[RMDB]
The record gives the reactivity of an RNA of 177 nucleotides to DMS and 2A3. It was measured as part of the RMDB library TTRDEL. The RNA was probed in 150 mM KOAc, 10 mM MgCl2 and 150 mM bicine (pH 8.5) at 24 C. 2A3 is a SHAPE reagent: it acylates the 2'-hydroxyl of flexible nucleotides of all four kinds. For 2A3 the reverse transcriptase was SuperScript II with manganese.
RNA sequence: GGGAACGACUCGAGUAGAGUCGAAAAGAUAUGGAUGACUACCCACCUAAUAAUUGCGAAGAACUCGGAAACGAGGGAGCAAGAAUUAGAGGUCAUCCUAAGUCAAAGCUAUCGUUCGCGAUAGCAACCGAUAUAAUCAGUUCGCUGAUUAUAUCGGAAAAGAAACAACAACAACAAC
Reactivity to DMS in 0.01 (KOAc 150mM, MgCl2 10mM, bicine 150mM(pH8.5), 24C), signal-to-noise 4, nucleotides 027 to 126: g010a100u000a140u000g030g010a020u000g010a010c000u000a140c010c010c020a300c140c000u020a010a000u000a060a160u000u000g000c020g010a120a170g030a120a130c010u000c000g010g000a060a070a160c000g020a020g000g010g000a080g000c000a010a010g010a250a020u000u000a010g000a090g000g000u010c000a000u000c000c000u000a030a090g000u020c160a090a080a130g010c010u000a000u000c010g010u010u000c250g020c040g010a010u000a010g010c010a060a050
Reactivity to 2A3 in 0.01 (KOAc 150mM, MgCl2 10mM, bicine 150mM(pH8.5), 24C), signal-to-noise 6, nucleotides 027 to 126: g060a050u220a170u300g000g000a000u000g000a000c000u150a250c010c020c000a020c000c020u000a010a010u040a030a040u020u020g030c030g180a300a030g010a110a080c010u000c010g000g020a040a070a070c000g000a010g000g010g000a010g000c000a010a000g020a040a030u010u000a000g010a010g010g000u000c010a010u010c000c000u010a080a020g120u110c140a200a060a020g020c000u010a000u010c000g090u100u160c300g000c030g140a000u010a000g000c000a000a000